[RMDB]
RNA sequence: GGGAACGACUCGAGUAGAGUCGAAAAGAUAUGGACUAUGACCCAGCGAUAUAGGCGUUUGACGUCGGAAACGACCGAGCCUAGAUCGCUGCAUAGUCCUAAGUCAAAACCUACCUUCGGGUAGGAACAUCAGAGUAUUGUUCGCAAUACUCUGAUGAAAAGAAACAACAACAACAAC
Reactivity to DMS in 0.01 (KOAc 150mM, MgCl2 10mM, bicine 150mM(pH8.5), 24C), signal-to-noise 9, nucleotides 027 to 126: g010a050u010a300u000g000g010a010c000u000a000u000g000a270c200c300c070a010g020c000g010a010u000a060u000a000g000g010c000g010u000u010u010g020a170c300g000u000c000g000g000a100a090a140c010g000a020c000c010g000a090g010c000c000u000a010g000a010u000c000g020c010u000g000c010a000u000a000g000u000c000c000u000a010a070g010u000c030a110a050a100a160c000c000u000a000c000c000u000u010c180g020g010g000u000a000g000g000a040a110
Reactivity to 2A3 in 0.01 (KOAc 150mM, MgCl2 10mM, bicine 150mM(pH8.5), 24C), signal-to-noise 7, nucleotides 027 to 126: g040a010u080a050u170g000g010a000c000u010a010u090g070a170c060c080c060a000g020c000g000a000u010a000u000a040g020g020c090g090u090u290u300g100a100c060g010u010c000g010g040a080a090a030c010g010a000c010c020g010a010g000c000c000u000a000g000a010u000c000g000c000u000g000c000a000u000a000g000u000c000c000u010a080a010g020u010c020a010a030a150a230c000c000u000a010c000c000u040u090c300g100g000g000u000a000g010g000a000a020